[RMDB]
RNA sequence: GGGAACGACUCGAGUAGAGUCGAAAACGUACACGCCUCCGCGCCACCCGGAAAACUCGCACACACACAGGGAGCGGAGAUCCGUCAGUGAUGACGCACAAGCGUGGAAUUCGUCUGUGUGUGCCAGGCCAUCGGCACCGUUCGCGGUGCCGAUGGCAAAAGAAACAACAACAACAAC
Reactivity to 2A3 in 0.01 (KOAc 150mM, MgCl2 10mM, bicine 150mM(pH8.5), 24C), signal-to-noise 1, nucleotides 027 to 126: c060g040u100a010c010a030c060g000c000c000u010c000c010g010c040g000c080c020a080c040c000c000g080g000a110a060a000a000c070u100c040g040c050a000c010a000c040a000c010a000c030a020g000g050g000a040g040c000g000g000a000g000a000u040c000c020g000u000c000a000g000u000g190a120u030g000a020c030g120c070a040c030a040a300g000c020g030u100g000g020a020a080u210u300c080g040u090c170u000g000u000g000u000g000u000g000c000c010a010g000
Conditions: 150 mM KOAc, 10 mM MgCl2 and 150 mM bicine (pH 8.5), 24 C. An RNA of 177 nucleotides, treated with 2A3 and read out base by base. It was measured as part of the RMDB library OK1LIB. Reactivities are given for positions 27 through 126.